[RMDB]
RNA sequence: GGGAACGACUCGAGUAGAGUCGAAAAUAAGACAGUUCACGUCACAGUAGGGAGAUGUAGAAAAGAUUUUAAAUACCACCUUGACGGUUACCCUAUAGAGCGAAAAACAAUUACCAGAGACCUUGGACGUCAUCCGUAGUUUCGACUACGGAUGACGAAAAGAAACAACAACAACAAC
Reactivity to DMS in 0.01 (KOAc 150mM, MgCl2 10mM, bicine 150mM(pH8.5), 24C), signal-to-noise 1, nucleotides 027 to 126: u000a200a180g000a140c290a080g100u040u010c120a270c010g000u030c000a000c240a300g040u000a000g000g000g000a040g010a140u000g000u010a230g000a080a000a140a040g000a110u000u000u000u070a090a000a020u000a080c080c050a010c000c050u000u000g030a000c000g030g000u000u000a080c010c000c050u000a050u000a000g000a080g000c010g000a000a040a080a110a000c170a260a000u080u050a080c000c000a070g000a110g030a000c010c000u000u110g000g060a300
Reactivity to 2A3 in 0.01 (KOAc 150mM, MgCl2 10mM, bicine 150mM(pH8.5), 24C), signal-to-noise 2, nucleotides 027 to 126: u190a000a000g050a010c010a030g000u000u050c030a010c120g000u000c080a020c050a060g150u180a050g040g000g070a000g000a160u160g060u080a030g200a080a060a050a000g110a000u000u080u130u130a120a110a040u130a080c000c000a080c010c020u030u080g090a000c000g000g060u040u030a050c050c000c000u010a010u170a040g070a000g030c060g050a160a100a040a000a030c080a000a180u130u150a020c000c090a000g120a000g060a080c010c040u000u000g040g000a030
Source: RMDB library OK1LIB, as collected in RNAgym. This 177-nucleotide RNA was probed chemically with DMS and 2A3. The reactions ran in a buffer of 150 mM KOAc, 10 mM MgCl2 and 150 mM bicine (pH 8.5), at 24 C. DMS adducts were read by reverse transcription with MarathonRT.